[RMDB]
The record gives the reactivity of an RNA of 177 nucleotides to 2A3 and DMS. The data come from the RNA Mapping Database (RMDB), library M2PK90. The DMS profile rests on 30,844 reads. For 2A3 the reverse transcriptase was SuperScript II with manganese. High DMS reactivity at an A or C suggests that its Watson-Crick edge is free. The reactions ran in a buffer of 150 mM KOAc, 10 mM MgCl2 and 150 mM bicine (pH 8.5), at 24 C. Values cover nucleotides 27 to 126.
RNA sequence: GGGAACGACUCGAGUAGAGUCGAAAAUCUAAGAGCGUAACAGACACUCAGACUGUACGACAGUCUGACACACACAUACGCUAGUGUAUCGUGUGUGUGAUAUCGAUGUAGCACGAAAAUGAAAGAAUAAUCUAAGAUAAUUCGUUAUCUUAGAUUAAAAAGAAACAACAACAACAAC
Reactivity to 2A3 in 0.01 (KOAc 150mM, MgCl2 10mM, bicine 150mM(pH8.5), 24C), signal-to-noise 9, nucleotides 027 to 126: u050c030u060a120a000g020a020g080c030g060u080a050a030c010a050g100a020c010a010c070u020c010a000g000a010c000u010g010u140a120c100g160a080c170a000g010u000c000u000g010a000c000a000c000a000c000a000c000a010u020a010c020g070c130u090a120g070u050g010u210a030u040c110g000u000g000u000g000u000g000u010g030a030u040a020u140c040g020a030u070g050u090a020g020c050a010c070g050a040a030a010a120u220g040a100a090a060g050a040a080
Reactivity to DMS in 0.01 (KOAc 150mM, MgCl2 10mM, bicine 150mM(pH8.5), 24C), signal-to-noise 9, nucleotides 027 to 126: u000c030u000a080a120g010a090g020c020g010u000a100a060c110a090g010a130c110a070c110u000c010a010g000a020c000u000g010u000a110c260g010a150c020a010g000u000c000u000g000a030c040a020c000a010c000a010c000a030u000a010c010g010c230u010a090g020u010g010u000a020u000c140g020u000g010u000g010u000g010u000g000a090u010a080u010c050g000a090u000g010u000a130g000c030a080c060g000a040a050a070a080u000g010a070a080a090g000a090a130